The data come from the RNA Mapping Database (RMDB), libraries RFM100 and RFMREP. An RNA of 177 nucleotides, treated with DMS and 2A3 and read out base by base. The RNA was probed in 150 mM KOAc, 10 mM MgCl2 and 150 mM bicine (pH 8.5) at 24 C. DMS adducts were read by reverse transcription with MarathonRT.

[RMDB]
RNA sequence: GGGAACGACUCGAGUAGAGUCGAAAAUGAGCAGGGAUUGUGUGUAUCGGCGUUGUGCUUUAAUAAUAUGCGCAUUGAAUCCGAAAGUGUUCCCUGCAAUAUAAAAAAUUCAGGGGAAGAUGGGCAGCUUAUUGUCGUAAUUCGUUACGACAAUAAGAAAAGAAACAACAACAACAAC
Reactivity to DMS in 0.01 (KOAc 150mM, MgCl2 10mM, bicine 150mM(pH8.5), 24C), signal-to-noise 9, nucleotides 027 to 126: u010g000a240g010c010a020g000g000g000a040u020u010g010u010g010u020g010u010a130u000c040g010g010c110g010u000u000g020u000g000c010u010u010u010a090a110u030a120a100u030a060u010g010c000g010c010a020u000u010g010a100a150u020c010c000g000a030a060a140g010u010g000u010u000c000c000c010u000g000c030a030a020u030a080u040a000a020a060a070a050a070u010u010c060a060g000g000g010g000a050a050g000a050u000g000g000g010c080a080g000
Reactivity to 2A3 in 0.01 (KOAc 150mM, MgCl2 10mM, bicine 150mM(pH8.5), 24C), signal-to-noise 9, nucleotides 027 to 126: u170g010a030g000c010a010g010g020g020a030u090u100g070u040g030u030g040u200a060u080c010g010g000c030g020u020u020g010u010g000c010u060u100u050a140a080u190a090a050u140a100u200g000c010g000c010a010u040u190g060a090a100u040c000c000g010a030a040a030g110u090g070u060u010c000c000c000u000g000c000a010a000u040a000u020a000a050a000a000a000a020u080u100c040a030g010g010g010g010a030a020g040a060u050g000g030g020c020a030g010